[RMDB]
RNA sequence: GGGAACGACUCGAGUAGAGUCGAAAACAUCCACUGCUACGGCAGUGGAUGAACGAGGUAGGUACGCCUACCUCGAAAGCGGGAUGUGUGCAUAUACAUUAAACGUCCAUGGUACGCCAUGGACGAAAGGAUGGUAGGUAUUCGUACCUACCAUCCUAAAAGAAACAACAACAACAAC
Reactivity to DMS in 0.01 (KOAc 150mM, MgCl2 10mM, bicine 150mM(pH8.5), 24C), signal-to-noise 2, nucleotides 027 to 126: c000a010u000c000c000a000c000u000g040c010u030a100c290g050g000c000a010g060u000g040g000a010u000g000a030a080c040g000a010g000g000u000a000g000g000u000a110c240g010c010c010u000a000c000c000u000c000g010a020a020a050g010c080g000g000g010a020u000g010u000g010u000g000c120a120u000a090u000a040c070a030u010u000a080a070a170c040g010u000c000c000a020u000g000g020u000a130c240g000c000c000a010u010g010g000a010c020g000a010a070
Reactivity to 2A3 in 0.01 (KOAc 150mM, MgCl2 10mM, bicine 150mM(pH8.5), 24C), signal-to-noise 2, nucleotides 027 to 126: c000a000u030c000c000a000c000u010g000c000u010a090c200g140g000c010a000g000u020g000g010a000u010g000a000a010c000g000a000g000g020u010a010g050g000u040a040c170g100c040c000u000a000c000c000u010c000g000a020a010a010g060c070g040g090g040a030u030g070u010g000u040g050c090a080u090a010u060a270c030a040u060u160a150a120a050c020g000u000c000c000a000u010g000g000u030a020c230g050c060c000a000u000g010g060a010c000g000a000a000